[RMDB]
RNA sequence: GGGAACGACUCGAGUAGAGUCGAAAAAAGUCCUUCAAUGGCCUGAUGAAGAGUGGCGAACUGUUGCUGGUGCUUGGACGUCCAGGAGCAGGUUGCAGCACCUUCCUCAAGACACUGUGCGGCGAGACUCAUGGACUUGAUGUUGAUCCGAAAAGUGUGUCAUAUUAUGAUUCGUCAUAAUAUGACAAAAAGAAACAACAACAACAAC
Reactivity to 2A3 in 0.01 (KOAc 150mM, MgCl2 10mM, bicine 150mM(pH8.5), 24C), signal-to-noise 7, nucleotides 027 to 156: a000a000g060u040c030c000u070u050c050a060a090u080g060g000c020c000u030g010a010u030g010a010a010g170a020g040u020g030g030c010g010a030a020c010u020g030u050u090g060c000u010g020g010u140g040c030u100u190g160g080a090c090g050u050c010c000a010g000g020a000g010c010a010g040g080u050u070g030c030a030g060c000a010c000c000u010u020c000c000u040c020a040a040g030a020c020a000c070u060g020u040g040c020g010g010c010g020a040g030a020c010u020c040a060u120g070g040a050c030u010u030g030a070u160g010u030u020g010a030u000c020c020g060a050a290a030a030g130u190g020
Reactivity to DMS in 0.01 (KOAc 150mM, MgCl2 10mM, bicine 150mM(pH8.5), 24C), signal-to-noise 3, nucleotides 027 to 156: a050a080g010u000c000c010u000u000c060a040a060u000g030g000c020c000u000g000a060u000g000a070a040g000a160g040u000g000g030c000g020a030a040c040u000g030u000u000g010c010u000g000g010u010g020c060u000u020g020g010a130c120g020u000c010c000a020g010g000a040g020c050a060g010g000u000u020g020c030a060g000c010a040c010c010u000u000c020c040u000c060a050a060g010a080c030a050c020u000g030u000g020c030g000g020c010g020a160g010a100c020u010c010a100u000g030g000a060c030u000u000g010a120u000g010u010u000g000a250u010c030c010g010a050a080a100a130g030u000g020

Structure probing data (2A3 and DMS) for a 207-nucleotide construct.
For 2A3, 6,017 sequencing reads were counted.
The RNA was probed in 150 mM KOAc, 10 mM MgCl2 and 150 mM bicine (pH 8.5) at 24 C.
For DMS, 10,590 sequencing reads were counted.
2A3 adducts were read by reverse transcription with SuperScript II with manganese.